Structure probing data (DMS and 2A3) for a 177-nucleotide construct. The 2A3 profile rests on 4,604 reads. Conditions: 150 mM KOAc, 10 mM MgCl2 and 150 mM bicine (pH 8.5), 24 C. It was measured as part of the RMDB library TTRDEL.

RNA sequence: GGGAACGACUCGAGUAGAGUCGAAAAGAUAUGGAGAGGCUUUGAUCUAUUCCAUGAUGACCUCGGAAACGAGCAAGUGGUUAUAGGGAGCCUCUCCUAAGUCAAAACUCGCCGUUCGCGGCGAGAAGAACAAGAAUUUGUUCGCAAAUUCUUGUUCAAAAGAAACAACAACAACAAC
Reactivity to DMS in 0.01 (KOAc 150mM, MgCl2 10mM, bicine 150mM(pH8.5), 24C), signal-to-noise 3, nucleotides 027 to 126: g000a050u010a300u000g010g010a010g020a020g020g000c010u010u010u020g000a080u010c000u000a030u000u000c000c010a010u000g010a100u010g000a130c300c000u000c010g010g000a100a100a150c010g010a020g000c030a030a150g010u000g000g000u000u000a010u000a020g010g000g000a020g010c000c010u000c000u000c000c000u000a000a060g000u000c030a090a070a110a200c000u000c000g020c000c020g020u000u010c260g030c020g010g010c010g000a010g010a030a050
Reactivity to 2A3 in 0.01 (KOAc 150mM, MgCl2 10mM, bicine 150mM(pH8.5), 24C), signal-to-noise 3, nucleotides 027 to 126: g010a010u040a010u160g010g000a010g000a010g020g000c030u190u170u120g090a090u120c020u060a050u060u040c000c000a000u010g040a200u100g070a080c020c020u010c010g000g030a060a050a020c010g000a000g000c040a190a220g020u010g040g130u300u190a060u080a120g030g020g010a000g000c000c000u000c000u000c000c000u000a000a000g000u000c000a000a010a020a110c000u010c000g000c010c000g020u090u070c300g000c010g100g000c010g010a000g010a000a010